[RMDB]
RNA sequence: GGGAACGACUCGAGUAGAGUCGAAAAGUUUCCACUGCUGCUCUGAGGGCACAAGAGGCAGGAUUUGGAAUUCCUGGAGAACUGUCUUCGUGAGAAGCUGGAAAUAUUUCUUUCAAUUCCAUCUCUUGGAGACUAAUGUUUUCGAACAUUAGUCUCCAAAAGAAACAACAACAACAAC
Reactivity to 2A3 in 0.01 (KOAc 150mM, MgCl2 10mM, bicine 150mM(pH8.5), 24C), signal-to-noise 4, nucleotides 027 to 126: g030u010u010u000c010c000a020c170u060g000c010u000g000c000u010c000u000g000a010g020g000g010c020a040c040a040a080g040a070g160g090c030a010g020g000a020u080u100u220g160g060a110a110u120u030c000c010u020g010g130a110g030a090a040c030u000g000u000c000u010u000c010g150u040g010a010g000a010a000g000c000u010g000g090a000a000a000u130a130u020u090u020c000u030u160u100c040a060a110u070u020c030c020a060u010c010u000c000u000u020
This 177-nucleotide RNA was probed chemically with 2A3. The reactions ran in a buffer of 150 mM KOAc, 10 mM MgCl2 and 150 mM bicine (pH 8.5), at 24 C. The data come from the RNA Mapping Database (RMDB), library RFM100.